[RMDB]
The record gives the reactivity of an RNA of 177 nucleotides to DMS and 2A3. For DMS the reverse transcriptase was MarathonRT. It was measured as part of the RMDB library M2PK50. 2A3 adducts were read by reverse transcription with SuperScript II with manganese. For DMS, 6,300 sequencing reads were counted.
RNA sequence: GGGAACGACUCGAGUAGAGUCGAAAAACCUAUGGAUUCGUCCAUAGGUGCUGGCCCGCGGCCUUUGUCCUGUCGCGUGUGCGUGGUGGGCGAUAUACGCGCAAUAGUGACAAUUCGUUGUCACUAAUAAGAGAAAAUACUUCGGUAUUUUCUCUUAAAAAGAAACAACAACAACAAC
Reactivity to DMS in 0.01 (KOAc 150mM, MgCl2 10mM, bicine 150mM(pH8.5), 24C), signal-to-noise 4, nucleotides 027 to 126: a010c000c000u000a000u000g000g010a030u000u010c160g000u000c000c000a010u000a000g000g000u000g020c110u010g010g020c010c010c050g030c080g010g000c040c090u000u010u000g010u000c030c030u000g010u000c030g010c020g020u000g010u000g030c050g030u000g010g010u010g010g010g000c030g000a070u000a070u010a060c060g010c020g020c180a130a140u000a010g000u000g000a020c000a020a040u000u010c200g000u000u000g010u000c000a020c000u000a030a080
Reactivity to 2A3 in 0.01 (KOAc 150mM, MgCl2 10mM, bicine 150mM(pH8.5), 24C), signal-to-noise 2, nucleotides 027 to 126: a000c000c000u000a000u000g000g000a020u010u080c190g060u010c060c000a000u000a010g000g010u010g010c070u060g080g060c000c040c060g060c010g070g030c060c040u090u110u190g060u110c000c020u090g050u130c030g000c020g010u080g030u090g080c050g010u030g030g060u120g040g100g000c000g000a020u030a000u020a230c040g000c020g020c040a000a080u050a050g010u010g010a000c000a010a040u050u040c200g040u060u010g000u010c000a010c010u000a000a050